[RMDB]
The record gives the reactivity of an RNA of 177 nucleotides to DMS and 2A3.
The 2A3 profile rests on 1,020 reads.
RNA sequence: GGGAACGACUCGAGUAGAGUCGAAAAUGUUUGCAAUUCGUUGCAAACAAACUACCGAGAACGUAGCUCGGUAUAAACAGCGAACCCUUGGAAACAAGGGAACUAUGGAACGCUUCGGCGUUCCAAAGAUUUUGCAAGAUUUCGAUCUUGCAAAAUCAAAAGAAACAACAACAACAAC
Reactivity to DMS in 0.01 (KOAc 150mM, MgCl2 10mM, bicine 150mM(pH8.5), 24C), signal-to-noise 1, nucleotides 027 to 126: u000g010u010u020u010g010c000a040a020u030u040c290g000u000u000g000c000a000a000a000c000a020a080a130c190u000a040c010c020g000a010g000a090a070c180g000u000a130g020c000u000c000g000g010u010a020u000a070a100a060c250a040g000c090g010a100a180c000c000c000u000u000g000g010a160a100a150c000a000a000g000g000g000a010a070c080u000a110u000g000g010a020a000c020g030c000u000u010c160g000g010c000g020u000u000c000c030a030a020a090
Reactivity to 2A3 in 0.01 (KOAc 150mM, MgCl2 10mM, bicine 150mM(pH8.5), 24C), signal-to-noise 1, nucleotides 027 to 126: u040g000u000u000u000g010c010a000a000u060u010c170g100u040u030g020c000a010a000a030c000a000a060a000c040u000a000c040c080g000a000g000a130a080c180g060u180a080g060c030u000c000g040g040u020a010u000a040a020a020c020a000g130c090g080a050a030c000c000c000u000u000g020g020a070a050a010c000a020a000g000g020g000a000a000c010u000a040u060g000g020a010a000c000g040c020u060u050c200g140g000c000g010u050u040c010c000a000a000a000